About this RNA: An RNA of 177 nucleotides, treated with 2A3 and DMS and read out base by base. DMS adducts were read by reverse transcription with MarathonRT. The 2A3 profile rests on 679 reads.
RNA sequence: GGGAACGACUCGAGUAGAGUCGAAAAAUGUAGGUGGAUAGAUUCAAACUGGAAGUUUUCUAACCUACAGUAGUUCUUCAUACCUCCUAUUGGAUAGAGGGUGAUAUUUCCACCUUCGGAUUUUUCAGCCACGUAUUAGGUUCGCCUAAUACGUGGCAAAAGAAACAACAACAACAAC
Reactivity to 2A3 in 0.01 (KOAc 150mM, MgCl2 10mM, bicine 150mM(pH8.5), 24C), signal-to-noise 2, nucleotides 027 to 126: a020u160g030u000a000g070g000u010g010g000a020u000a100g050a050u140u110c110a130a070a060c010u040g020g050a020a010g000u040u000u030u140c140u090a060a060c000c000u000a000c000a000g010u000a020g040u000u050c000u020u020c040a020u140a300c010c000u050c040c010u080a260u160u210g060g040a050u040a120g010a000g000g010g000u010g030a020u080a240u070u070u150c020c000a010c000c000u000u060c020g020g060a060u060u030u000u030u030c000a000
Reactivity to DMS in 0.01 (KOAc 150mM, MgCl2 10mM, bicine 150mM(pH8.5), 24C), signal-to-noise 1, nucleotides 027 to 126: a100u000g040u000a000g040g000u000g000g000a040u000a070g000a080u090u020c100a000a090a010c090u000g010g000a080a190g010u000u000u000u000c300u000a030a000c030c030u000a300c000a000g030u000a010g040u000u000c120u000u040c010a000u000a170c000c000u020c040c060u000a060u010u000g000g000a210u000a000g030a000g000g000g000u020g020a040u040a040u090u000u030c090c000a010c050c000u000u000c030g000g080a090u020u020u020u020u020c080a300